Notes: Structure probing data (2A3 and DMS) for a 207-nucleotide construct. It was measured as part of the RMDB library OK3TST. For DMS, 5,056 sequencing reads were counted. DMS adducts were read by reverse transcription with MarathonRT. For 2A3, 5,970 sequencing reads were counted.
RNA sequence: GGGAACGACUCGAGUAGAGUCGAAAACACAAGAGCAGCUUCAGCGCCAUUGCUUGCAGGCGCCACAAGGCUUUUAGUUUUGCGCAGUUAGGCGCCAAGCAGCUUAGCACAUUCAGCGCAGAGUUAGAGAGCACAUUCACAUUAGAGAGCACAUUGCGCAAGUAACAGAAUUCGUUCUGUUACUUGCAAAAGAAACAACAACAACAAC
Reactivity to 2A3 in 0.01 (KOAc 150mM, MgCl2 10mM, bicine 150mM(pH8.5), 24C), signal-to-noise 7, nucleotides 027 to 156: c090a000c020a050a050g030a030g040c040a010g010c020u100u070c100a030g010c020g010c030c010a080u090u120g010c020u030u100g030c020a060g030g000c010g010c000c020a070c030a050a080g080g010c040u090u100u130u170a080g010u020u050u130u090g040c090g000c010a050g020u080u130a070g060g000c010g000c020c020a020a020g020c000a000g000c010u050u070a010g030c010a040c020a150u100u130c060a030g010c010g000c040a010g010a000g030u050u040a030g020a010g010a000g060c020a010c010a080u090u110c040a020c000a090u050u100a050g030a010g010a010g070c050a020c050a140u130u250g020c080
Reactivity to DMS in 0.01 (KOAc 150mM, MgCl2 10mM, bicine 150mM(pH8.5), 24C), signal-to-noise 3, nucleotides 027 to 156: c060a180c060a080a130g010a120g020c030a070g020c080u000u000c060a120g010c010g040c030c050a130u000u010g020c030u000u000g000c050a280g000g000c040g010c000c020a040c030a050a020g020g010c010u000u020u000u010a070g030u000u000u000u000g030c020g050c060a170g020u010u000a100g020g000c000g010c000c030a070a090g040c040a070g010c000u010u000a090g030c020a080c060a150u000u000c110a140g040c040g010c010a120g000a070g020u000u010a030g010a090g000a100g040c030a060c070a110u000u000c040a040c070a090u000u000a130g000a080g000a140g050c040a060c080a130u010u000g000c180